[RMDB]
RNA sequence: GGGAACGACUCGAGUAGAGUCGAAAAGUAGGAUAUGGAAGACUGAGUUUGUGGAAGAGAAGAUAUCUGUGGGGUCUAAAACGAAGUACCACAAGUCCCCUUUAUAUGAUUUUUGUCCACAGGAGGUCUCCACCGAAUUUUUCGAAAUUCGGUGGAGAAAAGAAACAACAACAACAAC
Reactivity to 2A3 in 0.01 (KOAc 150mM, MgCl2 10mM, bicine 150mM(pH8.5), 24C), signal-to-noise 2, nucleotides 027 to 126: g100u110a030g070g040a080u040a010u180g000g030a040a010g040a030c020u000g000a010g220u120u110u040g030u020g010g010a020a000g040a030g040a040a000g040a010u060a050u040c020u000g120u170g030g010g000g000u000c030u060a010a070a070a000c080g080a050a000g060u100a130c000c120a010c120a100a000g110u040c010c000c020c000u020u140u110a090u000a000u060g130a130u010u030u000u030u110g040u010c000c000a000c000a000g000g110a080g030g110u030
Reactivity to DMS in 0.01 (KOAc 150mM, MgCl2 10mM, bicine 150mM(pH8.5), 24C), signal-to-noise 1, nucleotides 027 to 126: g000u000a050g010g000a070u000a040u060g030g010a120a020g030a030c040u010g000a140g000u010u050u000g000u030g000g030a060a080g000a180g000a030a080g000a110u000a030u000c010u020g000u060g000g000g000g000u000c070u000a030a050a030a080c150g000a130a060g000u150a000c180c010a130c110a120a030g010u000c000c000c000c010u000u000u060a030u010a070u060g000a150u010u000u000u000u100g030u000c000c000a020c020a080g000g010a140g000g010u000